This 207-nucleotide RNA was probed chemically with DMS and 2A3. The reactions ran in a buffer of 150 mM KOAc, 10 mM MgCl2 and 150 mM bicine (pH 8.5), at 24 C. The data come from the RNA Mapping Database (RMDB), library RNAMAK. The 2A3 profile rests on 10,325 reads.

RNA sequence: GGGAACGACUCGAGUAGAGUCGAAAAGGCUUUUCGAAGCCCAAAAAUCCUAAGUCGGAGGAAUCUCGCGAAAGAGGGCAAGGGAUCGGAAACGAUCCUGAUGACCCUACCCACCUUUCGUGCCCUCCGAUAUGGACGCUGCACAUUUCGAUGUGAAUACAGUAGAUAAUUUCGAUUAUCUACUGUAAAAAGAAACAACAACAACAAC
Reactivity to DMS in 0.01 (KOAc 150mM, MgCl2 10mM, bicine 150mM(pH8.5), 24C), signal-to-noise 4, nucleotides 027 to 156: g000g010c000u010u000u000u000c230g030a040a030g000c000c000c030a000a070a080a100a130u000c000c000u000a040a200g020u000c000g020g020a030g010g010a070a040u000c070u010c030g000c020g010a020a010a030g030a300g040g000g010c000a150a300g000g000g000a020u000c010g010g010a170a090a230c060g020a030u000c020c000u000g010a050u000g000a200c080c010c000u010a010c030c020c020a170c150c000u000u010u000c000g010u000g010c210c000c000u000c000c010g010a010u000a060u010g000g000a030c140g020c030u000g000c010a060c110a190u010u000u010c050g010a170u000g050u000g000a150a280
Reactivity to 2A3 in 0.01 (KOAc 150mM, MgCl2 10mM, bicine 150mM(pH8.5), 24C), signal-to-noise 8, nucleotides 027 to 156: g000g000c010u030u040u050u150c200g080a020a000g010c020c000c010a120a180a060a010a030u030c020c000u060a160a040g010u000c000g000g000a000g000g010a020a060u070c070u060c190g010c000g000a010a000a000g120a020g010g000g020c020a010a030g000g000g010a000u000c000g010g050a080a060a050c020g000a010u000c010c000u010g000a020u210g030a030c000c000c010u040a080c060c040c020a110c030c010u010u000u000c000g000u010g000c010c000c000u000c000c000g000a000u000a000u010g010g000a010c050g060c150u220g020c020a020c000a020u140u190u170c210g160a060u060g020u040g070a060a070
Annotation:
The DMS profile rests on 10,810 reads. DMS adducts were read by reverse transcription with MarathonRT.